[RMDB]
RNA sequence: GGGAACGACUCGAGUAGAGUCGAAAAGUACUAUGCCCGCCAUUAUUGAUGCAUGCUCCACCUCCCACUCCUUAAUAGUUGCUUUGAAGUUACCUUUCGGUGGGUUCUGCAGCGUCUUUAUCAGAAAUAGCUUUAUAAUGUUCGCAUUAUAAAGCUAAAAAGAAACAACAACAACAAC
Reactivity to 2A3 in 0.01 (KOAc 150mM, MgCl2 10mM, bicine 150mM(pH8.5), 24C), signal-to-noise 3, nucleotides 027 to 126: g030u030a060c080u140a080u150g070c000c000c050g080c050c050a110u170u130a060u060u150g080a040u040g030c050a050u060g000c000u060c010c000a020c020c020u040c000c010c000a030c020u030c030c030u100u100a070a030u040a180g050u040u060g000c020u080u000u100g050a040a050g030u100u030a040c000c010u010u090u150c050g010g020u010g020g040g010u050u040c040u010g030c000a030g010c000g050u030c040u000u120u050a190u190c010a000g090a050a130a060
Reactivity to DMS in 0.01 (KOAc 150mM, MgCl2 10mM, bicine 150mM(pH8.5), 24C), signal-to-noise 6, nucleotides 027 to 126: g020u000a080c120u000a080u010g020c020c000c020g020c080c090a070u010u000a070u010u000g010a070u010g000c050a050u000g010c020u000c030c030a060c040c030u000c020c010c020a130c080u000c050c040u010u010a050a070u010a080g010u000u000g010c030u000u000u000g010a050a070g000u000u000a050c040c040u000u010u010c090g010g040u000g000g010g010u000u010c060u010g010c040a040g010c030g010u000c050u000u010u000a070u010c080a080g010a060a070a110

This 177-nucleotide RNA was probed chemically with 2A3 and DMS. For 2A3, 2,000 sequencing reads were counted. Conditions: 150 mM KOAc, 10 mM MgCl2 and 150 mM bicine (pH 8.5), 24 C. DMS adducts were read by reverse transcription with MarathonRT.